Conditions: 150 mM KOAc, 10 mM MgCl2 and 150 mM bicine (pH 8.5), 24 C.
An RNA of 207 nucleotides, treated with 2A3 and DMS and read out base by base.
For DMS the reverse transcriptase was MarathonRT.
The data come from the RNA Mapping Database (RMDB), library OK3TST.

RNA sequence: GGGAACGACUCGAGUAGAGUCGAAAAGGUCCUGAUGCUAUGGACGCUGUUAUUCAAGAAGCACUUCAGUCCCGUAGUGCUGUUUUAGUUACACCACCUCAGCGCAUGUCUUUGGACAUGUACUAUAAAUUGGGGUGUUGUCCUAAAGGUUGGACCACUCCAGUAUGUUGUUCGCAACAUACUGGAGAAAAGAAACAACAACAACAAC
Reactivity to 2A3 in 0.01 (KOAc 150mM, MgCl2 10mM, bicine 150mM(pH8.5), 24C), signal-to-noise 4, nucleotides 027 to 156: g060g000u020c010c010u030g080a110u210g040c060u130a070u180g000g020a020c020g020c120u020g050u160u070a190u060u170c090a070a070g050a060a010g200c000a010c020u050u060c040a070g080u030c020c020c000g040u040a020g010u000g020c020u000g060u000u130u000u000a040g010u000u110a010c020a020c000c000a000c000c000u020c020a000g010c010g020c030a000u000g000u000c010u100u180u300g120g000a000c000a000u000g000u020a020c030u030a050u100a110a160a060u100u050g000g000g000g000u000g000u000u030g000u000c000c000u060a140a110a030g080g000u100u070g030g000a030c010c020a010
Reactivity to DMS in 0.01 (KOAc 150mM, MgCl2 10mM, bicine 150mM(pH8.5), 24C), signal-to-noise 3, nucleotides 027 to 156: g010g020u010c010c000u000g010a130u000g030c070u000a070u000g000g000a090c060g020c030u000g030u000u000a080u000u000c100a090a150g010a120a070g030c020a010c030u000u000c030a090g000u010c030c010c030g010u000a040g020u010g020c010u000g010u000u000u000u000a060g010u010u000a070c010a050c060c000a020c010c010u010c030a040g040c020g000c000a010u020g010u000c000u010u000u010g070g020a020c010a010u000g020u010a020c030u010a180u000a060a090a210u010u010g020g010g030g040u000g000u000u000g020u010c250c020u000a030a050a060g010g030u000u010g020g010a060c010c030a170